[RMDB]
RNA sequence: GGGAACGACUCGAGUAGAGUCGAAAAGACUACGUGUCGUUGUGGAAUCGAUACUACGCACGAGAUUCCAAGGUCUCUGUAGUACGUCCGCUGGUGACGUCUUUGGAGUCACGUUCGAUAUACGAAAGGUAUCUUCUAGGUUCGCCUAGAAGAUACCAAAAGAAACAACAACAACAAC
Reactivity to 2A3 in 0.01 (KOAc 150mM, MgCl2 10mM, bicine 150mM(pH8.5), 24C), signal-to-noise 5, nucleotides 027 to 126: g020a000c020u040a040c060g080u070g020u070c010g020u010u030g060u030g040g070a030a030u100c020g010a000u000a060c060u000a020c040g020c020a030c050g010a010g000a010u040u000c090c040a050a040g100g010u010c020u000c020u120g070u070a060g010u030a020c000g010u000c020c010g030c140u120g080g090u170g030a010c020g080u010c020u050u020u080g040g010a020g010u000c010a000c090g000u020u030c030g010a050u010a010u030a160c070g050a090a020a000
Reactivity to DMS in 0.01 (KOAc 150mM, MgCl2 10mM, bicine 150mM(pH8.5), 24C), signal-to-noise 3, nucleotides 027 to 126: g010a120c030u020a120c080g030u010g010u000c020g020u000u010g000u000g010g020a080a080u010c030g000a060u000a020c080u030a070c010g000c140a060c050g010a050g000a010u000u000c060c070a040a030g010g010u010c030u010c080u010g020u000a050g010u020a020c010g020u000c000c020g010c090u010g000g000u020g010a020c020g030u000c000u000u000u000g000g010a050g010u010c000a070c010g010u020u000c010g000a070u000a030u000a100c060g030a050a120a120